[RMDB]
Structure probing data (DMS) for a 177-nucleotide construct. The data come from the RNA Mapping Database (RMDB), library OK2TST. For DMS, 1,295 sequencing reads were counted. Values cover nucleotides 27 to 126.
RNA sequence: GGGAACGACUCGAGUAGAGUCGAAAAUGUGCGAGCCAGUUGUCAGGUUGGUCAGCGCGAACGCGUUGUUAUUGUCGAGGUGGACAACACUUGGCUGGUAUUGGGUGUCACCGCCCAAAACGUGACACCUUGUGCGCCAGUUCGCUGGCGCACAAGGAAAAGAAACAACAACAACAAC
Reactivity to DMS in 0.01 (KOAc 150mM, MgCl2 10mM, bicine 150mM(pH8.5), 24C), signal-to-noise 1, nucleotides 027 to 126: u020g020u000g030c000g000a070g010c000c000a030g000u000u000g020u000c020a090g010g000u000u020g070g020u010c030a030g000c020g000c000g000a090a100c170g030c020g030u010u000g020u010u000a060u010u000g000u000c040g000a140g010g030u020g010g000a020c010a000a070c020a130c160u000u000g010g010c020u000g000g020u010a070u000u000g040g010g060u000g010u000c000a010c030c260g000c040c010c160a060a030a120a080c120g020u000g000a040c050a040